[RMDB]
RNA sequence: GGGAACGACUCGAGUAGAGUCGAAAAGAUCGUACCUGCGUGACAUGAUCAUGACGAUCUAGUGAGGUACGUGUAGUACUGAUCCAUGGGUACCAGACUAGAUACACGAUCUCAGACUAGUACGUACGUGGGUUUUCUGUUUCGACAGAAAACCCACAAAAGAAACAACAACAACAAC
Reactivity to DMS in 0.01 (KOAc 150mM, MgCl2 10mM, bicine 150mM(pH8.5), 24C), signal-to-noise 1, nucleotides 027 to 126: g010a050u000c020g020u000a040c030c030u020g010c040g010u000g010a100c180a070u010g040a030u010c030a120u000g030a280c240g000a070u000c010u020a010g000u000g000a150g000g020u000a040c020g010u000g010u010a100g010u060a190c190u020g000a040u010c040c050a100u010g000g030g020u030a020c030c000a020g020a060c040u000a030g010a060u010a120c030a100c110g000a080u000c030u000c010a150g010a120c050u000a070g000u000a010c140g010u000a080c080
Reactivity to 2A3 in 0.01 (KOAc 150mM, MgCl2 10mM, bicine 150mM(pH8.5), 24C), signal-to-noise 1, nucleotides 027 to 126: g060a110u130c050g000u020a040c020c020u100g120c070g010u060g000a050c070a210u200g020a080u070c000a010u060g120a060c160g000a030u010c020u100a020g030u030g140a030g030g000u000a090c040g030u060g030u000a010g040u050a130c040u040g020a080u010c060c020a060u010g250g000g000u020a020c000c000a000g030a070c020u060a000g030a080u080a110c030a020c100g000a040u000c020u050c050a060g030a110c010u060a000g040u090a010c020g010u020a010c030

Background: Conditions: 150 mM KOAc, 10 mM MgCl2 and 150 mM bicine (pH 8.5), 24 C. An RNA of 177 nucleotides, treated with DMS and 2A3 and read out base by base. For 2A3, 1,051 sequencing reads were counted. For DMS, 824 sequencing reads were counted.